An RNA of 177 nucleotides, treated with DMS and 2A3 and read out base by base. The reactions ran in a buffer of 150 mM KOAc, 10 mM MgCl2 and 150 mM bicine (pH 8.5), at 24 C. For 2A3 the reverse transcriptase was SuperScript II with manganese.

[RMDB]
RNA sequence: GGGAACGACUCGAGUAGAGUCGAAAAACGACGCGCUACGGCGCGUCGAACAUACUACAAUAAUUUUCAUAAUGCAAUCACACACAAUCACCGUGUGACUGCAUUAUGAAAAUUCUUCUAGUGUGAACCUAUACGCUGUGUUCGCACAGCGUAUAGGAAAAGAAACAACAACAACAAC
Reactivity to DMS in 0.01 (KOAc 150mM, MgCl2 10mM, bicine 150mM(pH8.5), 24C), signal-to-noise 1, nucleotides 027 to 126: a180c010g010a000c000g020c000g000c000u000a120c090g020g080c000g020c020g040u020c000g000a060a080c010a030u000a000c000u010a000c090a040a020u020a000a000u000u000u000u000c000a010u030a020a000u000g000c020a000a080u000c000a010c000a000c040a080c200a120a120u050c190a070c230c120g000u000g000u010g030a030c050u000g030c000a000u000u000a000u000g000a020a010a000a000u000u000c030u010u000c200u000a000g000u000g010u020g010a060a200
Reactivity to 2A3 in 0.01 (KOAc 150mM, MgCl2 10mM, bicine 150mM(pH8.5), 24C), signal-to-noise 4, nucleotides 027 to 126: a000c030g020a010c020g100c010g010c030u070a080c300g150g000c000g010c000g000u000c000g000a000a000c000a000u020a000c000u010a000c020a020a020u000a010a000u000u000u000u000c000a000u010a010a000u000g000c000a010a020u000c000a010c010a000c010a000c050a090a240u190c060a160c200c160g000u000g000u000g000a000c000u000g000c010a010u000u000a000u000g000a000a000a000a000u000u000c000u000u010c000u010a000g000u010g000u010g080a070a050